Structure probing data (2A3 and DMS) for a 177-nucleotide construct.
Reactivities are rounded to 0.1 and cut off at 0 and 3.
Reactivities are given for positions 27 through 126.
It was measured as part of the RMDB library OK2TST.
DMS adducts were read by reverse transcription with MarathonRT.

RNA sequence: GGGAACGACUCGAGUAGAGUCGAAAAAUAUUUUACCUGAACCAAAGAUAAUUGCAUUCGGUGGUGUCCCUACUGGUAACAUGUAUGCACAGUUAGCCGCCAUAGCUGCAGGUGCCAUAAGUAGUAACACUGAUUCACCUUUCGAGGUGAAUCAGUGAAAAGAAACAACAACAACAAC
Reactivity to 2A3 in 0.01 (KOAc 150mM, MgCl2 10mM, bicine 150mM(pH8.5), 24C), signal-to-noise 1, nucleotides 027 to 126: a000u040a090u010u120u000u140a040c010c010u070g050a060a060c010c010a090a160a010g070a020u050a140a090u220u210g060c050a040u100u030c010g110g000u030g060g000u040g090u000c070c020c000u010a030c010u020g040g000u050a070a100c020a070u090g140u140a060u050g040c050a070c060a140g080u080u040a000g040c030c000g000c000c020a070u070a060g010c010u060g040c020a050g030g020u060g000c030c020a030u140a200a010g100u080a030g020u060a060a000
Reactivity to DMS in 0.01 (KOAc 150mM, MgCl2 10mM, bicine 150mM(pH8.5), 24C), signal-to-noise 1, nucleotides 027 to 126: a100u000a030u000u020u000u020a070c050c020u010g020a110a100c130c030a010a080a060g010a100u000a040a050u020u010g010c070a080u010u000c100g000g030u010g000g000u000g000u000c030c030c020u020a100c130u010g000g000u000a070a040c120a090u000g010u000a030u000g000c040a030c130a040g010u000u000a080g000c100c030g050c050c070a060u000a090g020c040u000g000c020a060g010g020u000g000c030c020a050u010a060a040g010u000a050g000u010a060a270